Annotation: This 177-nucleotide RNA was probed chemically with 2A3 and DMS. The reactions ran in a buffer of 150 mM KOAc, 10 mM MgCl2 and 150 mM bicine (pH 8.5), at 24 C.
RNA sequence: GGGAACGACUCGAGUAGAGUCGAAAAGGCAUCACUAGGACAUGAGUGAUCCGCACUACACUAGCGUACGAUCACUGCCAUGCAUGGAUCCAUGACAUGCUAGGGUACAUACUCAUGGGAUCCUAGGCCAUGUGUCCGCAUUCGUGCGGACACAUGGAAAAGAAACAACAACAACAAC
Reactivity to 2A3 in 0.01 (KOAc 150mM, MgCl2 10mM, bicine 150mM(pH8.5), 24C), signal-to-noise 2, nucleotides 027 to 126: g060g000c070a040u020c010a060c070u010a010g000g020a010c000a010u040g010a000g040u050g010a060u000c020c030g040c010a090c040u210a070c050a080c130u050a060g000c010g070u090a060c040g040a020u010c010a010c120u000g010c020c030a100u170g000c000a010u100g000g020a020u000c050c020a100u220g070a050c030a030u080g000c000u020a030g150g000g000u050a060c020a090u200a060c050u040c030a020u000g040g010g090a060u050c000c000u040a010g020g030
Reactivity to DMS in 0.01 (KOAc 150mM, MgCl2 10mM, bicine 150mM(pH8.5), 24C), signal-to-noise 2, nucleotides 027 to 126: g010g030c040a070u010c060a200c000u000a000g010g000a150c040a000u000g000a010g030u020g010a090u010c060c090g030c120a050c210u000a070c140a090c140u000a060g000c040g040u000a140c200g000a030u000c070a060c140u000g030c050c170a100u020g000c020a040u000g000g010a020u000c020c050a070u010g020a080c110a040u030g020c030u010a020g010g000g000u010a040c080a050u010a080c010u000c030a030u000g000g010g020a170u000c010c000u000a040g000g000